Chemical mapping of a 177-nucleotide RNA with 2A3 and DMS. The RNA was probed in 150 mM KOAc, 10 mM MgCl2 and 150 mM bicine (pH 8.5) at 24 C. 2A3 adducts were read by reverse transcription with SuperScript II with manganese. It was measured as part of the RMDB libraries RFM100 and RFMREP.
RNA sequence: GGGAACGACUCGAGUAGAGUCGAAAAGCAGCACUGCCGGCCAUCGCGCAGACCGCUCCGCCACAGGGGCAAGGCGCCAGCGCGCAGAAGGCCAAUGACGAGAAGGCCAAGACCGAGGCCGAGCGCAACACGUACGAUUAUUCGUAAUCGUACGUGUAAAAGAAACAACAACAACAAC
Reactivity to 2A3 in 0.01 (KOAc 150mM, MgCl2 10mM, bicine 150mM(pH8.5), 24C), signal-to-noise 6, nucleotides 027 to 126: g060c070a010g020c030a020c080u120g020c020c010g030g000c010c000a080u080c010g010c010g000c010a000g040a030c010c040g010c000u010c010c010g080c070c100a180c060a100g030g000g000g000c040a050a120g060g000c060g020c060c060a050g010c020g000c000g000c020a030g030a160a040g010g000c000c020a030a060u120g040a040c100g040a010g050a190a060g020g000c000c010a050a020g080a040c040c040g030a130g000g020c000c020g010a020g000c040g000c010a010
Reactivity to DMS in 0.01 (KOAc 150mM, MgCl2 10mM, bicine 150mM(pH8.5), 24C), signal-to-noise 7, nucleotides 027 to 126: g010c040a100g000c050a100c120u010g000c040c040g010g000c010c000a190u020c100g000c000g000c030a060g010a170c160c060g010c010u010c040c040g030c130c130a120c200a170g000g010g000g000c020a090a090g000g000c040g000c050c110a090g000c020g000c010g000c100a040g010a140a100g000g000c010c000a060a070u030g010a120c130g010a090g000a110a170g000g000c000c000a040a120g000a130c070c030g000a120g010g000c000c010g000a080g010c020g010c160a150